[RMDB]
RNA sequence: GGGAACGACUCGAGUAGAGUCGAAAAGAUAUGGACGUCGAAGACAGCGGCGUUAUGGUUGUAGUAGCUACUCGGAAACGAGUAGACUACGCAGAUAACCAUAACGCCGUCGAGACGUCCUAAGUCAUCGUUUACACUGGUUCGCCAGUGUAAACGAAAAAGAAACAACAACAACAAC
Reactivity to DMS in 0.01 (KOAc 150mM, MgCl2 10mM, bicine 150mM(pH8.5), 24C), signal-to-noise 2, nucleotides 027 to 126: g010a020u000a300u030g000g000a000c000g020u000c000g000a060a130g000a130c300a210g000c000g010g030c000g030u000u000a010u000g000g020u000u010g000u000a040g000u000a000g000c000u000a000c010u010c010g010g000a120a110a300c010g040a090g000u000a000g000a110c000u000a000c000g010c190a150g000a050u020a060a000c000c000a040u030a010a000c000g000c000c010g010u000c010g010a110g000a010c000g000u020c000c000u000a000a070g000u000c040a210